[RMDB]
RNA sequence: GGGAACGACUCGAGUAGAGUCGAAAACGACAUGGCUUCGGCCAUGUCGAAAGGACGAGUGAGACGGAAACGGAGGUAGGUCCAACUACCUUCUCACUCAAAAAAUCCGUUUGUUCGCAAACGGAAAGGUACAGUUUAUGUUCGCAUAAACUGUACCAAAAGAAACAACAACAACAAC
Reactivity to 2A3 in 0.01 (KOAc 150mM, MgCl2 10mM, bicine 150mM(pH8.5), 24C), signal-to-noise 3, nucleotides 027 to 126: c010g000a000c000a000u010g010g010c010u060u030c210g070g000c000c000a000u000g000u000c000g000a000a000a000g070g030a020c090g010a000g010u010g000a010g000a020c040g030g040a070a050a040c070g050g020a010g050g070u190a040g050g180u050c020c010a030a040c060u010a020c000c000u030u000c000u000c000a000c000u000c000a030a030a010a010a000a080u020c010c010g000u010u000u010g060u030u050c250g000c110a000a010a010c000g000g000a020a030a020
Reactivity to DMS in 0.01 (KOAc 150mM, MgCl2 10mM, bicine 150mM(pH8.5), 24C), signal-to-noise 5, nucleotides 027 to 126: c020g010a010c010a010u000g000g010c010u000u010c250g040g000c000c000a010u010g000u000c000g010a020a060a080g010g010a170c210g010a030g020u000g010a010g010a070c140g010g010a040a100a150c150g000g010a030g010g020u010a040g010g010u000c060c070a040a140c060u000a060c000c010u000u000c000u000c010a010c000u010c000a000a020a060a100a070a090u000c000c000g000u010u000u000g010u000u010c160g010c010a000a000a000c000g010g000a000a020a020